[RMDB]
RNA sequence: GGGAACGACUCGAGUAGAGUCGAAAAUGAAACGGAGGAGACGUUACAGCAACGUGUCAGCUGAAAUGAUGGGCGUAGACGCACGUCAGCGGCGGAAAUGGUUUCUAUCAAAAUGAAAGUGUUUAGAGUCAGAACUAACGUUCGCGUUAGUUCUGACAAAAGAAACAACAACAACAAC
Reactivity to 2A3 in 0.01 (KOAc 150mM, MgCl2 10mM, bicine 150mM(pH8.5), 24C), signal-to-noise 2, nucleotides 027 to 126: u090g120a010a000a000c150g000g020a020g000g000a050g020a000c000g050u070u090a070c010a000g020c020a000a090c060g000u080g040u030c010a100g000c050u080g070a100a070a070u160g070a000u030g020g130g000c010g000u130a070g040a080c000g000c020a050c010g000u000c010a000g080c000g020g000c000g000g080a020a060a100u100g000g000u020u000u060c040u040a030u070c060a110a050a040a000u090g080a230a050a040g160u140g040u080u160u070a060g000a020
Reactivity to DMS in 0.01 (KOAc 150mM, MgCl2 10mM, bicine 150mM(pH8.5), 24C), signal-to-noise 2, nucleotides 027 to 126: u000g000a030a040a100c060g010g020a120g000g000a030g000a050c000g030u000u000a110c160a070g000c200a070a010c060g010u020g000u000c020a150g000c010u000g040a140a080a080u010g000a050u000g000g030g050c000g010u000a080g050a150c080g000c060a030c010g020u020c030a040g020c000g000g050c000g010g020a080a070a070u050g020g020u000u000u000c020u020a090u000c120a030a160a100a050u050g020a050a090a090g020u000g000u010u000u010a040g020a300
Background:
Structure probing data (2A3 and DMS) for a 177-nucleotide construct. Source: RMDB libraries RFM100 and RFMREP, as collected in RNAgym. For 2A3, 978 sequencing reads were counted. High DMS reactivity at an A or C suggests that its Watson-Crick edge is free.